[RMDB]
RNA sequence: GGGAACGACUCGAGUAGAGUCGAAAAAUUGAUGUGGGUUUUAACUUGUUGCCGUUCGGGACGUUGACGAAAUGGAGCGAUUUGACCCGUCUUGAAACACGGACCAAGGAGUCUAACAUGUGUGCAAGAAGACUCAUUUGUUCGCAAAUGAGUCUUCAAAAGAAACAACAACAACAAC
Reactivity to DMS in 0.01 (KOAc 150mM, MgCl2 10mM, bicine 150mM(pH8.5), 24C), signal-to-noise 1, nucleotides 027 to 126: a050u000u010g000a100u000g000u010g030g010g010u000u020u030u000a080a070c100u000u000g000u000u030g020c020c030g010u010u010c030g020g010g000a020c080g000u000u040g020a100c040g010a060a000a060u010g010g000a100g000c010g000a150u000u000u000g000a150c090c070c010g030u000c040u000u030g000a050a110a040c150a200c000g000g000a020c050c010a100a080g000g000a120g010u000c020u020a080a060c120a050u010g000u010g040u000g010c090a110a150

The data come from the RNA Mapping Database (RMDB), library RFMREP. Chemical mapping of a 177-nucleotide RNA with DMS. The DMS profile rests on 855 reads. The RNA was probed in 150 mM KOAc, 10 mM MgCl2 and 150 mM bicine (pH 8.5) at 24 C.